[RMDB]
RNA sequence: GGGAACGACUCGAGUAGAGUCGAAAAUAUUUCGCGCCAUUGUAGCUCAGUGCUAGAGCGCUUCACUCGUAUAAAAAUACUGCCAUGAAGAGCUCCGCGGUUCAAUCCCGCGUGGUGGCAAAAAAAACUAUGUGGUUAACUUCGGUUAACCACAUAGAAAAGAAACAACAACAACAAC
Reactivity to DMS in 0.01 (KOAc 150mM, MgCl2 10mM, bicine 150mM(pH8.5), 24C), signal-to-noise 1, nucleotides 027 to 126: u000a100u020u000u000c020g010c300g030c010c040a040u000u000g000u000a020g010c020u000c210a150g040u000g000c020u040a010g000a010g000c000g040c000u000u000c020a050c120u010c150g020u010a050u030a030a080a100a170a130u000a030c000u000g000c120c120a150u000g000a010a050g000a080g020c000u000c000c020g020c010g000g030u020u000c150a300a300u010c240c000c010g000c010g010u000g000g020u000g000g020c000a010a000a000a030a070a020a000a110
Background: This 177-nucleotide RNA was probed chemically with DMS. DMS (dimethyl sulfate) methylates the pairing face of unpaired adenines and cytosines.